[RMDB]
The data come from the RNA Mapping Database (RMDB), libraries RFM100 and RFMREP. Chemical mapping of a 177-nucleotide RNA with 2A3 and DMS.
RNA sequence: GGGAACGACUCGAGUAGAGUCGAAAAGAAAGAAAGAAAGCGGACUGUAGGGGUACAGUGAUCAGGUUACGAUGGAUUUCUCUAGUAACAGCCUCGUAGCUUGAUCACCAUCUCCCUAUGAUUCAAAGCUUGACUGAAUUUUCGAAUUCAGUCAAGCAAAAGAAACAACAACAACAAC
Reactivity to 2A3 in 0.01 (KOAc 150mM, MgCl2 10mM, bicine 150mM(pH8.5), 24C), signal-to-noise 5, nucleotides 027 to 126: g100a000a030a000g070a010a070a000g100a040a090a010g130c100g010g070a020c040u080g010u020a000g020g000g020g020u030a040c040a030g000u000g000a000u000c010a000g000g000u010u000a000c010g010a040u300g020g030a100u030u190u040c130u040c040u110a100g050u140a170a060c040a070g060c000c000u000c000g000u000a000g000c000u000u000g010a000u000c000a000c010c000a000u030c080u090c010c000c000u000a010u010g040a020u010u040c040a040a020a050
Reactivity to DMS in 0.01 (KOAc 150mM, MgCl2 10mM, bicine 150mM(pH8.5), 24C), signal-to-noise 2, nucleotides 027 to 126: g010a130a100a070g000a030a050a150g000a040a130a030g010c220g000g010a080c050u020g000u000a010g040g000g000g000u000a120c290a170g000u010g000a010u000c000a020g000g000u000u000a000c000g000a000u060g000g000a150u000u030u000c160u020c190u000a130g010u030a060a110c300a060g000c000c000u000c000g030u000a010g050c000u000u000g020a020u000c000a010c000c050a120u000c150u030c000c000c000u000a010u030g000a090u000u000c010a070a040a100

Values are in units of 0.01, from 0 to 300, in steps of 10.